[RMDB]
RNA sequence: GGGAACGACUCGAGUAGAGUCGAAAAGUUCACAUCCCCAACCCGCGGGCCGGCUACUCUUCUUUCCCUUCUCUCGUCUUCUUCGGUCAACCUCCGAAGUUCCUCUUCCUCUUCCCUGCUGAGGGACACACUAUGGUCUUCGGACCAUAGAAAAGAAACAACAACAACAAC
Reactivity to 2A3 in 0.01 (KOAc 150mM, MgCl2 10mM, bicine 150mM(pH8.5), 24C), signal-to-noise 9, nucleotides 027 to 129: g070u160u160c100a040c020a160u060c020c000c000c000a020a060c000c000c010g020c020g000g000g010c010c010g020g000c010u060a060c020u030c000u090u020c000u030u050u050c010c000c000u070u020c030u000c000u010c010g080u010c030u110u010c000u030u030c030g010g020u050c040a070a080c030c020u030c010c010g030a040a010g000u020u020c000c000u010c000u030u010c000c010u020c010u040u040c010c010c010u030g040c040u030g060a070g010g020g010a010c010a010c000a010
Reactivity to DMS in 0.01 (KOAc 150mM, MgCl2 10mM, bicine 150mM(pH8.5), 24C), signal-to-noise 9, nucleotides 027 to 129: g050u050u060c100a100c080a150u030c000c020c010c050a080a120c020c020c020g030c050g000g000g000c020c040g000g030c040u000a050c040u010c030u000u000c020u020u020u000c020c000c020u020u030c040u010c020u020c050g030u010c060u030u020c030u040u000c060g000g000u010c060a080a150c090c050u000c010c010g000a040a060g020u000u040c020c010u020c020u030u040c000c000u020c070u000u010c010c020c000u030g000c050u000g010a060g020g010g010a070c050a080c120a100

About this RNA: This 170-nucleotide RNA was probed chemically with 2A3 and DMS. For DMS the reverse transcriptase was MarathonRT. 2A3 adducts were read by reverse transcription with SuperScript II with manganese. The RNA was probed in 150 mM KOAc, 10 mM MgCl2 and 150 mM bicine (pH 8.5) at 24 C. Reactivities are rounded to 0.1 and cut off at 0 and 3.